[RMDB]
RNA sequence: GGGAACGACUCGAGUAGAGUCGAAAACUGGGUUCGCCCAGAAAUCUGAUAUGGAGAUAUAGCACGCAGAUACUAGCUACCCACCGCUUCUCGGAAACGAGAAGCGAGGCUAGUGUAGUGCCAUAUCUCCUAAGUCCAAGUGGUUCUUCGGAACCAAGUUGAAAUUUGUAUUCGUACAAAUUUCAACAAAAGAAACAACAACAACAAC
Reactivity to DMS in 0.01 (KOAc 150mM, MgCl2 10mM, bicine 150mM(pH8.5), 24C), signal-to-noise 2, nucleotides 027 to 156: c030u040g020g010g020u000u000c230g020c010c000c010a060g010a040a110a180u010c030u000g000a040u000a180u010g000g000a060g000a030u000a000u000a010g010c000a030c020g030c150a170g010a110u000a060c000u000a010g010c020u000a020c010c030c020a300c140c010g030c010u000u000c000u000c000g000g000a080a080a230c010g020a010g000a000a020g010c000g000a010g020g000c000u010a010g020u000g000u000a060g090u000g000c000c020a040u000a000u000c000u010c000c010u000a010a190g000u000c000c050a060a110g000u000g020g030u010u000c010u000u030c290g080g010a040a020c010c000a020a100
Reactivity to 2A3 in 0.01 (KOAc 150mM, MgCl2 10mM, bicine 150mM(pH8.5), 24C), signal-to-noise 6, nucleotides 027 to 156: c010u010g010g010g020u070u070c230g070c010c000c010a020g040a050a110a030u150c110u130g030a040u040a070u160g000g000a010g000a000u000a000u010a000g010c020a020c060g060c240a050g020a190u060a050c000u000a000g010c020u090a140c030c050c040a040c020c020g000c000u000u000c000u000c000g030g010a060a050a040c000g000a010g000a010a000g000c000g000a000g000g000c000u000a000g000u000g000u020a040g020u000g000c010c000a000u000a000u000c000u000c000c000u000a010a000g010u000c020c020a080a060g110u040g070g010u000u010c000u020u080c250g090g000a010a020c000c010a010a020
The data come from the RNA Mapping Database (RMDB), library RNAMAK.
Chemical mapping of a 207-nucleotide RNA with DMS and 2A3.
For DMS the reverse transcriptase was MarathonRT.
Reactivities are rounded to 0.1 and cut off at 0 and 3.
The DMS profile rests on 3,659 reads.